[RMDB]
Chemical mapping of a 177-nucleotide RNA with 2A3 and DMS. It was measured as part of the RMDB library TTRDEL. The RNA was probed in 150 mM KOAc, 10 mM MgCl2 and 150 mM bicine (pH 8.5) at 24 C.

RNA sequence: GGGAACGACUCGAGUAGAGUCGAAAAGAUAUGGAAUACUUCGAUAAGAGCCAUAUCGGAAACGAUAUUGCUCUUUUGACGAAGUUCCUAAGUCAAAGCUGUUGAAUUGUUCGCAAUUCAACAGCAAGAUUGAUUAGGGGUUCGCCCCUAAUCAAUCAAAAGAAACAACAACAACAAC
Reactivity to 2A3 in 0.01 (KOAc 150mM, MgCl2 10mM, bicine 150mM(pH8.5), 24C), signal-to-noise 3, nucleotides 027 to 126: g020a030u070a030u170g000g020a060a060u120a290c000u010u010c010g050a050u010a080a030g000a000g000c010c010a010u000a010u000c000g000g010a060a060a010c010g000a000u000a000u000u000g000c000u000c000u020u060u020u060g150a120c030g000a000a010g010u000u000c010c000u050a180a030g050u030c040a090a060a060g000c000u000g020u010u010g010a000a010u010u010g030u090u170c300g010c200a010a000u010u000c000a000a000c010a000g000c000a010a000
Reactivity to DMS in 0.01 (KOAc 150mM, MgCl2 10mM, bicine 150mM(pH8.5), 24C), signal-to-noise 4, nucleotides 027 to 126: g010a060u010a300u010g000g000a050a060u010a060c010u000u000c010g020a170u000a020a000g000a010g000c000c070a010u000a000u000c000g010g000a090a090a190c010g000a000u000a000u010u000g010c000u000c000u000u000u020u000g020a160c170g000a010a010g010u000u000c000c000u000a070a170g010u000c040a060a100a110g010c000u000g020u000u000g010a000a000u000u000g010u000u020c210g030c000a000a000u000u000c000a000a000c000a010g020c000a010a010